[RMDB]
RNA sequence: GGGAACGACUCGAGUAGAGUCGAAAAGAUAUGGACCAUGGGGUAGAAUACAGGGAGCUCUGCGUACGAUCGGAAACGAUCGUGAUCAGAGCUUUGAUCUGUAUUGCGAAUACAUGGUCCUAAGUCAAAGUUCUUCAUGAUUCGUCAUGAAGAACAACCUUAUCCAUGGGUUCGCCCAUGGAUAAGGAAAAGAAACAACAACAACAAC
Reactivity to DMS in 0.01 (KOAc 150mM, MgCl2 10mM, bicine 150mM(pH8.5), 24C), signal-to-noise 1, nucleotides 027 to 156: g000a080u000a060u000g000g010a040c010c010a020u010g000g020g000g020u000a120g000a080a030u000a000c010a000g000g000g000a030g020c000u000c000u010g020c120g040u000a010c010g020a000u000c010g010g000a050a030a090c010g030a030u010c020g060u000g000a040u000c000a010g000a010g020c010u000u010u000g010a030u000c000u020g010u000a000u020u010g020c040g020a200a180u010a030c030a020u000g000g030u010c010c000u000a000a090g010u000c020a120a080a150g000u000u010c000u000u000c010a000u010g000a060u000u000c300g010u000c000a000u000g000a010a020g020a000a000c010a040a040
Reactivity to 2A3 in 0.01 (KOAc 150mM, MgCl2 10mM, bicine 150mM(pH8.5), 24C), signal-to-noise 3, nucleotides 027 to 156: g000a000u010a010u040g000g000a010c000c010a000u000g010g000g010g070u050a010g000a010a000u010a000c000a020g000g000g000a000g000c000u000c000u010g020c020g080u300a000c000g000a000u000c000g000g000a020a010a000c000g000a000u010c010g000u010g000a030u260c010a000g000a000g010c000u040u010u000g000a000u000c000u010g010u010a000u000u060g180c000g020a030a000u010a000c000a000u000g000g000u000c000c000u000a010a000g000u000c010a060a070a050g000u010u000c000u000u000c000a010u000g010a020u020u120c260g060u020c130a000u010g010a000a000g000a000a000c000a000a000